[RMDB]
RNA sequence: GGGAACGACUCGAGUAGAGUCGAAAAGCUUAAUGCUAACCGAUGCAAGAAUUGACUGUGGUUUGAAGCAUCGGCUAAACACACAGUCUAGCCAAGCUAUAUUGCUUGGAUAUAGUUUGGUAAAAACUUAAUCAAGCUAGCUUUUAUGCCCUGCUCUUCCAUAUCUACCGUUCGCGGUAGAUAUGGAAAAAGAAACAACAACAACAAC
Reactivity to 2A3 in 0.01 (KOAc 150mM, MgCl2 10mM, bicine 150mM(pH8.5), 24C), signal-to-noise 4, nucleotides 027 to 156: g000c000u110u140a140a020u260g000c020u060a050a050c020c050g010a010u040g000c050a060a090g020a180a200u050u030g010a010c010u010g000u000g060g050u090u110u150g130a140a020g000c010a040u090c040g040g000c030u090a070a050a000c090a000c000a000c000a020g000u000c000u000a010g000c000c000a000a010g000c010u010a000u000a010u000u140g060c060u050u120g040g000a000u000a000u000a000g000u000u010u010g010g000u030a050a050a000a020a010c100u160u180a090a050u110c050a020a000g010c020u030a010g000c000u050u080u000u060a040u300g010c000c000c020u040g040c030u010c010u010

The record gives the reactivity of an RNA of 207 nucleotides to 2A3.